[RMDB]
RNA sequence: GGGAACGACUCGAGUAGAGUCGAAAACUGGUUGCGGCUGAGAACUCAUCCAUCACUUUUUCAAUGAGCAUUUCGUUGCUUUUGGACUGUAGUAACAUAGCUAUUCCCCUUUCGGCGAGACUUGGCGGCUAUUUCUAAAGUUCGCUUUAGAAAUAGCAAAAGAAACAACAACAACAAC
Reactivity to 2A3 in 0.01 (KOAc 150mM, MgCl2 10mM, bicine 150mM(pH8.5), 24C), signal-to-noise 5, nucleotides 027 to 126: c040u030g010g080u080u080g050c060g040g000c040u040g050a020g030a140a030c010u000c030a030u020c030c010a040u070c030a050c070u070u100u020u160u140c040a050a050u150g020a030g010c030a020u080u160u200c130g100u140u040g000c030u030u040u020u080g050g020a060c040u040g000u050a020g020u010a090a020c030a080u070a050g040c010u040a080u010u060c000c000c000c020u010u060u080c030g050g000c020g000a020g010a050c030u030u040g070g020c000g030
Reactivity to DMS in 0.01 (KOAc 150mM, MgCl2 10mM, bicine 150mM(pH8.5), 24C), signal-to-noise 6, nucleotides 027 to 126: c060u000g030g010u000u000g020c070g010g020c050u000g000a110g010a090a090c090u000c050a060u000c040c030a050u010c100a080c050u010u010u010u010u000c060a060a050u010g010a020g010c040a050u000u010u020c150g010u000u000g000c020u000u000u000u000g000g010a040c130u010g010u000a070g010u000a060a060c070a060u000a050g020c040u000a180u000u000c010c010c000c140u000u000u000c070g010g000c060g000a100g000a070c070u000u000g010g010c120g010